[RMDB]
RNA sequence: GGGAACGACUCGAGUAGAGUCGAAAAGACCUUGCUGAGUGGCUUGCAGAGCGCGGCUACAAGCAAGCAGUAGAUCCUAUCUUUGAUGCCGCCUUUGCAGAAACGCCGGCGGACAACGUUUUGUGGCUCGUCGAAAAUACUUCGGUAUUUUCGACGAAAAAGAAACAACAACAACAAC
Reactivity to 2A3 in 0.01 (KOAc 150mM, MgCl2 10mM, bicine 150mM(pH8.5), 24C), signal-to-noise 4, nucleotides 027 to 126: g080a000c000c020u000u020g000c000u050g050a120g130u010g000g000c040u140u300g010c020a050g040a070g300c120g020c000g010g040c000u010a010c010a030a030g040c010a000a020g020c050a030g060u200a090g000a060u040c010c020u070a150u070c120u040u220u120g080a140u190g000c010c010g000c010c010u170u120u210g020c010a020g150a080a130a010c110g000c060c030g010g000c000g020g000a040c030a040a060c080g030u030u000u000u060g230u100g030g000c010
Reactivity to DMS in 0.01 (KOAc 150mM, MgCl2 10mM, bicine 150mM(pH8.5), 24C), signal-to-noise 1, nucleotides 027 to 126: g140a030c050c000u000u030g000c000u020g000a040g080u000g000g020c020u040u010g110c000a050g000a060g000c140g000c000g000g090c000u000a110c060a300a000g000c110a010a000g000c240a070g020u020a110g000a110u030c050c010u000a180u030c080u030u020u000g020a180u010g000c050c000g000c000c020u060u030u000g000c010a060g000a110a150a200c120g000c000c300g040g000c000g000g010a110c060a110a060c050g000u060u000u030u000g070u030g000g000c150
Notes
Structure probing data (2A3 and DMS) for a 177-nucleotide construct. The reactions ran in a buffer of 150 mM KOAc, 10 mM MgCl2 and 150 mM bicine (pH 8.5), at 24 C. Reactivities are rounded to 0.1 and cut off at 0 and 3. Source: RMDB library OK1LIB, as collected in RNAgym. For 2A3, 1,661 sequencing reads were counted.